[RMDB]
RNA sequence: GGGAACGACUCGAGUAGAGUCGAAAACAACGGGAUCCCGGGCGCUGCAGCUUGGGAGGCGGCUCUCCCCAGGCGGCGUCCGCGGAGACACCCAUCCGUGAACCCCAGGUCCCGGGCCGCCGGCUCGAUAACUAGUUUAUUUCGAUAAACUAGUUAUAAAAGAAACAACAACAACAAC
Reactivity to DMS in 0.01 (KOAc 150mM, MgCl2 10mM, bicine 150mM(pH8.5), 24C), signal-to-noise 7, nucleotides 027 to 126: c150a110a050c060g010g000g000a120u000c000c000c000g010g000g010c000g000c010u000g010c050a120g010c060u010u010g010g000g010a020g000g010c170g020g010c130u010c010u010c030c000c000c080a050g010g050c000g010g010c000g020u000c000c000g000c160g000g010a020g000a120c160a130c040c030c020a120u030c020c020g000u000g010a100a160c060c010c000c030a110g000g000u010c040c020c030g010g010g000c010c020g010c100c060g010g000c030u010c060g010
Reactivity to 2A3 in 0.01 (KOAc 150mM, MgCl2 10mM, bicine 150mM(pH8.5), 24C), signal-to-noise 7, nucleotides 027 to 126: c040a000a030c040g020g000g020a030u030c000c000c000g000g000g000c010g000c010u040g000c010a190g080c020u010u010g010g000g000a010g010g010c120g160g030c050u050c010u010c060c000c000c010a010g010g010c000g000g000c000g000u000c000c000g000c080g000g010a010g070a000c020a110c020c010c000a030u050c020c020g030u030g090a090a100c010c010c000c000a020g040g030u050c020c020c000g020g020g000c010c020g100c040c070g040g020c010u020c010g010